[RMDB]
RNA sequence: GGGAACGACUCGAGUAGAGUCGAAAAAAAGGAAGAAGUCCUUGCAUAUGUUGUACAGCUACCUAUCUAUGGUGUAAUAGAUACACCUUGCUGGAAAUUACACACAUCACCUCUAUGCACCACCAACGACUAUGACAUGCUUCGGCAUGUCAUAGUCAAAAGAAACAACAACAACAAC
Reactivity to DMS in 0.01 (KOAc 150mM, MgCl2 10mM, bicine 150mM(pH8.5), 24C), signal-to-noise 1, nucleotides 027 to 126: a040a020a120g020g010a030a130g000a110a190g040u000c000c020u000u000g020c030a070u000a050u010g030u010u000g010u000a070c040a030g070c050u000a160c130c070u000a060u000c060u000a090u030g010g010u000g000u000a020a090u000a060g000a120u010a000c040a050c110c050u000u000g010c070u000g000g010a030a050a040u000u000a040c090a080c200a070c070a010u000c130a150c040c050u000c060u000a120u010g020c030a080c030c030a060c080c070a080a040c170
Reactivity to 2A3 in 0.01 (KOAc 150mM, MgCl2 10mM, bicine 150mM(pH8.5), 24C), signal-to-noise 2, nucleotides 027 to 126: a050a050a050g060g010a000a100g090a090a070g240u050c020c010u010u020g020c020a000u080a040u120g070u040u040g010u040a060c010a000g000c020u040a050c030c000u110a060u170c070u120a120u200g070g040u000g020u000a100a190u140a170g110a040u070a050c020a000c000c000u040u120g000c050u020g040g060a000a190a000u220u080a050c110a000c010a010c020a100u040c050a030c000c000u010c020u010a060u070g020c020a010c040c000a020c010c020a030a060c080
The record gives the reactivity of an RNA of 177 nucleotides to DMS and 2A3.
The RNA was probed in 150 mM KOAc, 10 mM MgCl2 and 150 mM bicine (pH 8.5) at 24 C.
Reactivities are given for positions 27 through 126.
It was measured as part of the RMDB library OK2TRN.